Chemical mapping of a 177-nucleotide RNA with DMS and 2A3.
Values are in units of 0.01, from 0 to 300, in steps of 10.
The reactions ran in a buffer of 150 mM KOAc, 10 mM MgCl2 and 150 mM bicine (pH 8.5), at 24 C.
For 2A3 the reverse transcriptase was SuperScript II with manganese.
The data come from the RNA Mapping Database (RMDB), library OK2TST.

RNA sequence: GGGAACGACUCGAGUAGAGUCGAAAAAUUGGUCAUACAUGAGCUUCUUCGACCCGACCAUUGGUGCUCCACGCCACGCACGACAGGGGUGGUGUUGGUUGAAGGCAUUGGCUUGCACAUCAAUGCCCUACUAGCGACAAUUCGUUGUCGCUAGUAGAAAAGAAACAACAACAACAAC
Reactivity to DMS in 0.01 (KOAc 150mM, MgCl2 10mM, bicine 150mM(pH8.5), 24C), signal-to-noise 5, nucleotides 027 to 126: a120u000u000g000g000u000c030a070u010a070c160a120u000g010a050g000c180u000u010c100u000u010c040g000a100c020c010c100g000a070c040c020a060u020u010g000g000u010g000c030u000c040c030a040c060g010c000c000a050c030g030c090a090c090g010a100c250a100g010g000g020g020u000g000g000u000g000u000u010g010g010u000u010g010a110a070g010g000c000a030u000u000g020g000c070u000u010g010c070a060c070a090u010c010a020a000u000g010c030c010
Reactivity to 2A3 in 0.01 (KOAc 150mM, MgCl2 10mM, bicine 150mM(pH8.5), 24C), signal-to-noise 3, nucleotides 027 to 126: a010u090u090g000g010u030c020a020u030a180c050a090u170g040a030g050c080u140u060c020u080u050c110g040a040c040c020c000g030a040c030c020a040u010u090g140g010u060g020c000u000c030c010a010c020g020c020c000a060c020g160c010a070c090g240a110c090a130g050g070g000g000u020g020g010u030g040u090u040g030g060u030u070g080a090a030g030g020c010a010u030u020g000g010c030u050u180g000c060a020c000a050u050c010a010a010u030g020c000c030